Structure probing data (2A3 and DMS) for a 177-nucleotide construct. DMS (dimethyl sulfate) methylates the pairing face of unpaired adenines and cytosines.
RNA sequence: GGGAACGACUCGAGUAGAGUCGAAAAUAAGUAAGACUACCCGCUGAACUUAAGCAUAUCAGUAAGCGGAGGAAAAGAAACUAACAAGGAUUCCGUCAGUAACGGCGAGUGAAGACGGAGUAGCCCAUAUCCUACAGAUAUUCGUAUCUGUAGGAUAAAAAGAAACAACAACAACAAC
Reactivity to 2A3 in 0.01 (KOAc 150mM, MgCl2 10mM, bicine 150mM(pH8.5), 24C), signal-to-noise 9, nucleotides 027 to 126: u190a050a010g090u030a050a020g030a080c020u030a060c010c000c000g000c010u010g020a060a080c020u080u100a090a020g140c050a140u110a080u300c030a010g000u010a020a000g000c010g000g020a110g060g040a060a090a020a000g080a050a080a000c050u110a040a020c070a080a070g070g010a040u050u000c000c000g010u000c000a020g040u020a020a010c010g140g040c220g120a040g020u010g030a040a020g130a010c010g000g000a000g010u000a020g010c020c000c000a020
Reactivity to DMS in 0.01 (KOAc 150mM, MgCl2 10mM, bicine 150mM(pH8.5), 24C), signal-to-noise 9, nucleotides 027 to 126: u020a080a070g010u010a050a070g010a170c040u010a120c060c000c000g000c000u000g000a120a130c080u010u010a060a160g020c250a110u020a050u000c070a050g010u000a080a040g010c010g010g000a110g000g000a070a060a080a060g000a120a050a040c030u000a070a080c140a110a110g010g010a070u010u000c000c000g000u000c000a030g000u040a090a010c010g000g040c240g000a190g010u000g010a130a090g000a020c000g000g000a030g020u000a060g010c000c000c010a150
Background: For 2A3 the reverse transcriptase was SuperScript II with manganese. The RNA was probed in 150 mM KOAc, 10 mM MgCl2 and 150 mM bicine (pH 8.5) at 24 C. For DMS the reverse transcriptase was MarathonRT. The data come from the RNA Mapping Database (RMDB), libraries RFM100 and RFMREP.